[RMDB]
RNA sequence: GGGAACGACUCGAGUAGAGUCGAAAAAUAUGGAAGGAUUUCUACGAUUUACCGCUUUCGUUAAACUUCGAUUUUGCAAAAUAUUUAAACCCAAAAAUUUUAUCGAAAGACGAGAAUCAUUAUUUAAUAUCGUUCAUAUUUUCGAAUAUGAACGAUAAAAAGAAACAACAACAACAAC
Reactivity to DMS in 0.01 (KOAc 150mM, MgCl2 10mM, bicine 150mM(pH8.5), 24C), signal-to-noise 1, nucleotides 027 to 126: a030u030a120u030g010g000a130a030g000g050a100u020u020u000c070u000a120c040g010a010u000u000u000a170c100c000g000c020u000u000u000c000g000u010u000a000a060a090c170u020u010c190g000a130u000u000u000u000g000c190a090a030a040a050u020a030u020u030u000a050a070a120c060c040c030a010a010a020a090a020u000u000u010u010a000u000c020g010a010a000a030g010a060c030g040a300g000a020a040u030c030a050u000u020a070u020u010u010a040a140